Source: RMDB library TTRDES, as collected in RNAgym. This 177-nucleotide RNA was probed chemically with DMS and 2A3.
RNA sequence: GGGAACGACUCGAGUAGAGUCGAAAAGAUAUGGAGGCUAGUAGGGAGUCCUCAUGUCGGAAACGACAUACGCGAGGACAUCGAUCUAUCAGCCUCCUAAGUCAAAACGUGUGGUUCGCCACACGAACUUUAAAGCAAACUUCGGUUUGCUUUAAAGAAAAGAAACAACAACAACAAC
Reactivity to DMS in 0.01 (KOAc 150mM, MgCl2 10mM, bicine 150mM(pH8.5), 24C), signal-to-noise 6, nucleotides 027 to 126: g000a030u000a240u000g010g000a030g010g020c000u010a060g030u000a010g010g010g010a110g020u000c000c010u000c010a030u000g010u000c000g010g000a060a040a130c010g020a010c010a020u010a060c300g070c300g010a010g010g010a020c020a180u000c150g000a080u010c010u000a020u000c080a010g010c000c000u000c000c000u010a000a050g010u000c030a130a050a120a190c030g010u010g030u000g000g010u000u010c300g000c010c010a010c010a000c010g000a010a080
Reactivity to 2A3 in 0.01 (KOAc 150mM, MgCl2 10mM, bicine 150mM(pH8.5), 24C), signal-to-noise 4, nucleotides 027 to 126: g000a020u030a030u100g000g010a000g000g000c010u050a020g050u020a020g060g100g110a250g040u010c000c000u020c010a010u000g010u010c000g000g020a020a010a000c010g020a000c030a020u150a080c300g110c160g220a010g000g030a010c000a050u230c070g060a040u020c000u000a010u050c030a000g010c000c000u000c000c000u000a000a000g010u000c000a000a010a070a130c030g000u000g000u010g000g130u080u130c300g060c130c000a000c000a000c000g010a010a010
Source information:
As a SHAPE reagent, 2A3 marks flexible, mostly unpaired nucleotides at the ribose 2'-OH. The DMS profile rests on 7,485 reads.